The record gives the reactivity of an RNA of 170 nucleotides to 2A3 and DMS. The RNA was probed in 150 mM KOAc, 10 mM MgCl2 and 150 mM bicine (pH 8.5) at 24 C. For DMS the reverse transcriptase was MarathonRT. The 2A3 profile rests on 74,059 reads.
RNA sequence: GGGAACGACUCGAGUAGAGUCGAAAACCAGUGGAUCCGUGGGAUGCUCCUCCCGAUUCCGAUAUCCCUUCCCCCGAGAGGUCCCCCAGGAAUGGCGGGACCCCACUCUACAGGGUCCGCGUUCCAUUAGCUACCUUCUUCGGAAGGUAGAAAAGAAACAACAACAACAAC
Reactivity to 2A3 in 0.01 (KOAc 150mM, MgCl2 10mM, bicine 150mM(pH8.5), 24C), signal-to-noise 9, nucleotides 027 to 129: c000c000a010g040u070g060g030a030u020c030c040g040u110g010g010g010a050u090g040c040u020c010c010u020c010c020c000g020a040u100u010c020c010g040a050u020a100u150c010c000c000u020u050c010c000c000c000c000g040a040g010a010g040g020u010c000c000c000c000c000a010g040g110a080a060u050g220g110c110g030g020g000a000c000c000c000c000a030c010u070c010u050a040c030a050g000g000g010u000c010c030g030c020g020u010u000c010c010a060u090u080a010g010
Reactivity to DMS in 0.01 (KOAc 150mM, MgCl2 10mM, bicine 150mM(pH8.5), 24C), signal-to-noise 9, nucleotides 027 to 129: c020c030a060g010u040g040g020a000u000c020c070g000u020g010g030g030a070u000g000c040u020c050c010u020c030c000c010g020a090u020u010c030c010g030a140u000a100u060c030c010c030u030u020c010c000c020c010c050g020a080g000a130g040g030u030c010c000c010c010c010a030g020g070a100a050u000g080g000c120g000g000g000a010c030c000c030c050a060c070u040c040u000a080c090a160g000g010g010u000c010c030g030c050g000u010u010c010c020a110u010u010a070g020
The data come from the RNA Mapping Database (RMDB), library 15KLIB.